[RMDB]
RNA sequence: GGGAACGACUCGAGUAGAGUCGAAAAGGAGAGUAGAUGAUUCUCGUUAAGUGUGUGUGAGUGGGAUGUCAUCACACAACGAAGCGAGAGCGCGGUGAAUCAUCGCAUCAGCUCCAAAGAAAGAAAAAUGAUGAUCCAUAUUCGUAUGGAUCAUCAUAAAAGAAACAACAACAACAAC
Reactivity to 2A3 in 0.01 (KOAc 150mM, MgCl2 10mM, bicine 150mM(pH8.5), 24C), signal-to-noise 8, nucleotides 027 to 126: g030g010a040g000a010g050u230a060g010a020u010g000a030u050u000c000u000c010g020u030u050a130a050g030u100g020u010g000u000g000u020g080a280g250u130g020g100g040a110u160g130u180c010a020u010c000a020c000a000c000a010a030c010g020a080a010g010c000g010a020g010a030g020c010g000c010g030g010u070g030a020a050u060c010a000u000c020g000c030a050u050c040a030g040c010u000c000c000a030a050a000g050a040a070a010g120a020a060a050a020
Reactivity to DMS in 0.01 (KOAc 150mM, MgCl2 10mM, bicine 150mM(pH8.5), 24C), signal-to-noise 5, nucleotides 027 to 126: g000g020a020g000a080g000u010a130g000a020u010g010a030u020u000c000u010c000g010u000u040a090a190g020u010g000u010g040u000g000u000g010a030g020u020g030g020g000a170u030g020u040c030a050u000c000a000c000a000c000a060a010c010g000a140a110g010c000g010a100g000a100g030c080g010c010g000g000u020g000a100a050u010c010a010u000c010g000c160a100u040c100a110g000c010u000c000c000a090a060a100g000a090a060a100g000a050a060a080a100
This 177-nucleotide RNA was probed chemically with 2A3 and DMS. The RNA was probed in 150 mM KOAc, 10 mM MgCl2 and 150 mM bicine (pH 8.5) at 24 C. For DMS, 11,820 sequencing reads were counted. It was measured as part of the RMDB library OK1LIB.